[RMDB]
RNA sequence: GGGAACGACUCGAGUAGAGUCGAAAACACAGUGAGAACUGAAGGAGAAGCAGUUGCUGGCUUUUGGGACAGUUUGCCGGAUUGCACCCCAAAUAGAGAAGUUGGUGUGCUAGGAGAGGAAUAUGAGCAUAUUCUGGGCGUUCGCGCCCAGAAUAUGAAAAGAAACAACAACAACAAC
Reactivity to DMS in 0.01 (KOAc 150mM, MgCl2 10mM, bicine 150mM(pH8.5), 24C), signal-to-noise 2, nucleotides 027 to 126: c030a190c120a050g010u010g000a150g020a130a000c030u000g010a130a130g020g030a030g020a040a030g050c090a110g000u040u010g010c070u020g010g000c010u000u000u000u000g000g030g030a060c070a010g040u000u020u000g000c050c030g000g000a110u000u020g000c010a040c000c000c000c000a010a070a050u030a090g000a100g000a080a100g050u000u000g000g000u000g000u000g000c020u000a070g000g000a050g000a100g000g000a040a020u010a140u050g000a070g000
Reactivity to 2A3 in 0.01 (KOAc 150mM, MgCl2 10mM, bicine 150mM(pH8.5), 24C), signal-to-noise 2, nucleotides 027 to 126: c110a000c010a040g110u050g050a110g070a070a030c030u040g060a220a040g110g140a060g010a090a000g000c000a020g030u040u030g040c000u030g000g070c050u060u110u030u090g000g020g070a000c010a070g010u000u040u080g050c050c020g020g110a060u000u090g020c000a070c020c000c000c000a010a010a010u210a060g200a000g010a270a090g030u020u010g000g020u010g020u020g020c030u030a040g000g080a100g060a030g060g140a110a000u180a100u220g130a070g010
Description: Source: RMDB library OK1LIB, as collected in RNAgym. The record gives the reactivity of an RNA of 177 nucleotides to DMS and 2A3. Conditions: 150 mM KOAc, 10 mM MgCl2 and 150 mM bicine (pH 8.5), 24 C. DMS adducts were read by reverse transcription with MarathonRT.